Background
The record gives the reactivity of an RNA of 207 nucleotides to DMS and 2A3. The RNA was probed in 150 mM KOAc, 10 mM MgCl2 and 150 mM bicine (pH 8.5) at 24 C. As a SHAPE reagent, 2A3 marks flexible, mostly unpaired nucleotides at the ribose 2'-OH.
RNA sequence: GGGAACGACUCGAGUAGAGUCGAAAAAAAACAGCUACUGUCUAUGGUAAUCACAAUCUAUGGUUCCAAUCAAAGUGAGAAAUUGGGGGCACGUGGUCUGACCAAGACUAUAGGUUUAUGAUGAGCAUAUAGUUCAAGCAUAUGGAAAAAUGGCGUAGUGAUAUGGAUUAUUCGUAAUCCAUAUCACAAAAGAAACAACAACAACAAC
Reactivity to DMS in 0.01 (KOAc 150mM, MgCl2 10mM, bicine 150mM(pH8.5), 24C), signal-to-noise 2, nucleotides 027 to 156: a030a020a050a030c030a060g010c020u000a040c030u000g020u000c020u010a080u000g030g020u000a130a070u000c050a050c060a060a050u000c060u000a070u000g020g010u010u020c010c020a080a110u010c050a060a030a060g040u000g000a140g010a090a070a060u010u010g000g010g010g010g000c020a040c040g040u000g000g030u010c030u000g000a100c030c030a050a080g010a020c010u000a040u010a040g010g050u000u000u010a050u000g010a120u000g010a070g000c020a090u000a030u000a020g020u000u010c060a060a060g020c000a100u000a080u000g020g000a040a020a020a060a070u000g010g030c050g010u000a130
Reactivity to 2A3 in 0.01 (KOAc 150mM, MgCl2 10mM, bicine 150mM(pH8.5), 24C), signal-to-noise 5, nucleotides 027 to 156: a000a010a000a000c060a020g030c020u060a070c020u050g030u050c020u030a140u060g000g060u090a050a020u030c010a010c030a060a040u020c020u090a050u020g060g010u080u040c030c020a030a010u080c060a070a080a120g100u120g040a070g060a090a180a070u130u130g000g020g000g030g000c020a010c060g050u060g010g010u030c050u040g070a060c020c030a050a030g030a000c000u020a010u020a060g050g030u030u040u020a050u090g080a050u080g020a010g040c040a020u070a010u040a100g050u060u050c040a050a010g020c000a050u070a060u140g050g030a080a050a010a020a030u050g030g020c040g030u040a020